Annotation: Source: RMDB library OK3TST, as collected in RNAgym. An RNA of 207 nucleotides, treated with 2A3 and DMS and read out base by base. The reactions ran in a buffer of 150 mM KOAc, 10 mM MgCl2 and 150 mM bicine (pH 8.5), at 24 C.
RNA sequence: GGGAACGACUCGAGUAGAGUCGAAAACUGUUGAAAGUAAAAACAUGAAAUGGGAAAAGAGGGGUAUGCAAAUAGAAAGCAUAAUAAAGGUGUAGUGGCUCUAUUAAUAUCAGACACAGUAUGGACUUCAGGAACCAAAAGUAUUACUAAAGAUAAAAUGUAGUUCGUAGUUCGCUACGAACUACAUAAAAGAAACAACAACAACAAC
Reactivity to 2A3 in 0.01 (KOAc 150mM, MgCl2 10mM, bicine 150mM(pH8.5), 24C), signal-to-noise 1, nucleotides 027 to 156: c010u020g020u050u080g080a170a100a000g040u060a090a090a060a010a000c020a000u040g090a040a150a100u050g000g000g070a020a090a020a020g040a000g020g080g020g000u080a080u100g020c010a110a000a000u020a060g040a040a080a010g000c020a000u000a070a050u030a050a180a020g060g000u000g000u030a040g000u020g100g030c000u020c000u000a050u010u180a100a080u050a030u130c020a000g020a010c020a000c000a090g050u090a030u100g060g000a010c000u040u020c100a030g000g000a010a000c000c040a050a060a040a040g010u000a010u110u080a090c070u150a080a020a050g090a030u150a190a150a030
Reactivity to DMS in 0.01 (KOAc 150mM, MgCl2 10mM, bicine 150mM(pH8.5), 24C), signal-to-noise 1, nucleotides 027 to 156: c070u010g030u000u000g020a100a080a200g050u000a030a060a060a060a170c080a130u000g000a010a050a100u000g010g010g000a170a130a080a090g000a060g000g010g040g040u010a050u000g000c030a040a050a130u000a110g040a110a030a190g020c040a010u010a060a140u000a000a050a050g010g010u000g110u000a080g060u010g020g000c010u000c010u000a130u010u000a050a040u000a080u000c040a080g010a040c030a100c040a040g040u000a120u010g020g000a110c030u000u000c030a000g020g000a050a140c010c040a070a010a020a060g010u000a080u010u000a100c010u000a070a020a050g000a140u020a030a050a070